Chemical mapping of a 177-nucleotide RNA with DMS and 2A3.
2A3 adducts were read by reverse transcription with SuperScript II with manganese.
RNA sequence: GGGAACGACUCGAGUAGAGUCGAAAACAGGCUGUCUACAAAAAGUACCUGGCGGCUGGGGCAAUUGGAACCGCACUACCCCUGAUAGUGGCUCUGGUAUUAUCGGUCGCUAUGCUGAUGGCUACACCAUGUGCACAGUAUUCGUACUGUGCACAUGAAAAGAAACAACAACAACAAC
Reactivity to DMS in 0.01 (KOAc 150mM, MgCl2 10mM, bicine 150mM(pH8.5), 24C), signal-to-noise 4, nucleotides 027 to 126: c080a110g000g020c010u000g000u000c040u000a070c110a070a090a130a120a080g010u010a050c070c050u010g000g010c040g000g010c020u000g000g000g010g000c110a050a050u000u010g000g000a070a020c060c020g020c050a050c080u020a140c040c010c030c040u010g000a100u010a060g010u000g000g000c050u000c030u000g000g010u000a100u000u000a060u000c060g010g020u000c040g020c030u010a040u000g000c070u000g020a090u010g020g000c030u010a100c170a110c170
Reactivity to 2A3 in 0.01 (KOAc 150mM, MgCl2 10mM, bicine 150mM(pH8.5), 24C), signal-to-noise 3, nucleotides 027 to 126: c030a010g060g010c010u040g020u050c030u130a150c100a060a190a030a040a040g040u030a080c010c040u020g030g000c020g000g030c060u050g000g000g000g070c050a040a040u060u070g010g000a090a030c040c010g060c040a040c020u110a100c020c040c000c010u050g060a080u060a110g060u060g080g000c020u020c070u140g060g010u100a110u230u080a050u170c010g010g030u030c020g000c020u010a030u090g030c020u070g020a070u060g040g000c030u090a030c030a040c090